An RNA of 177 nucleotides, treated with DMS and 2A3 and read out base by base. DMS adducts were read by reverse transcription with MarathonRT. The data come from the RNA Mapping Database (RMDB), library OK1LIB.
[RMDB]
RNA sequence: GGGAACGACUCGAGUAGAGUCGAAAAGAGAGUACCAACGGGCCUGCAUGGGUGUGCAUUCAUAAAUACGCGAACAAAUCAUGUGUGUGCUUAUUAGGCUGAGGUGAGGGCGAGAGUCCAUGCAAGGGUAUGCCUACCCGUUCGCGGGUAGGCAUACAAAAGAAACAACAACAACAAC
Reactivity to DMS in 0.01 (KOAc 150mM, MgCl2 10mM, bicine 150mM(pH8.5), 24C), signal-to-noise 1, nucleotides 027 to 126: g000a120g000a120g030u040a050c070c040a030a070c080g010g080g030c000c040u030g000c080a060u000g000g010g020u000g050u030g000c020a070u000u030c000a040u050a030a040a130u040a100c110g100c010g000a060a180c090a080a060a080u010c130a080u080g010u000g030u000g000u000g000c020u070u060a060u000u000a060g000g010c000u010g000a070g000g020u000g000a060g000g000g020c100g000a110g000a300g010u000c030c000a020u000g010c080a130a090g000g000
Reactivity to 2A3 in 0.01 (KOAc 150mM, MgCl2 10mM, bicine 150mM(pH8.5), 24C), signal-to-noise 2, nucleotides 027 to 126: g130a000g020a020g040u040a060c000c010a110a020c010g010g080g000c010c000u030g110c030a120u120g000g060g010u040g060u020g000c020a030u030u070c000a010u130a150a050a010u140a080c010g070c040g020a040a020c030a010a100a050u180c180a230u060g020u000g000u000g080u040g000c000u080u140a150u160u130a040g040g000c050u020g040a070g030g010u160g070a170g010g020g000c030g000a100g010a000g010u000c040c000a000u050g040c080a080a050g060g000